[RMDB]
RNA sequence: GGGAACGACUCGAGUAGAGUCGAAAAUCAACGGAUGAGUUAAUGUAUAUUUUUGCCGCCUUGGGCGGAUCUGUAAACAUUUGGGCCAUUAUACCUCUUAGUGCAUCAGUGUUCUACCGCGGAGCCGACAGUUAUUUCGUUUCGACGAAAUAACUGUAAAAGAAACAACAACAACAAC
Reactivity to DMS in 0.01 (KOAc 150mM, MgCl2 10mM, bicine 150mM(pH8.5), 24C), signal-to-noise 1, nucleotides 027 to 126: u020c070a060a050c080g010g000a080u000g020a110g010u010u000a060a020u010g020u010a070u000a030u000u010u010u010u000g020c000c010g000c020c040u020u010g050g020g040c010g020g000a020u000c050u010g010u000a040a080a040c050a030u010u000u000g010g020g000c040c040a040u010u010a050u000a070c050c020u000c060u000u000a070g010u010g000c010a080u000c040a040g000u000g010u000u000c040u010a050c030c040g020c100g000g010a070g010c040c080g010
Reactivity to 2A3 in 0.01 (KOAc 150mM, MgCl2 10mM, bicine 150mM(pH8.5), 24C), signal-to-noise 1, nucleotides 027 to 126: u130c000a000a030c020g040g010a040u030g040a030g130u090u150a090a050u070g070u040a030u030a120u180u100u000u140u200g140c000c000g000c040c000u160u190g070g150g000c000g000g030a010u000c010u060g120u060a000a180a000c010a050u060u040u090g000g020g030c010c020a000u040u040a040u060a050c000c000u040c020u020u050a030g060u050g050c000a030u040c050a050g000u000g050u110u050c000u070a090c010c030g060c050g030g070a040g070c000c000g020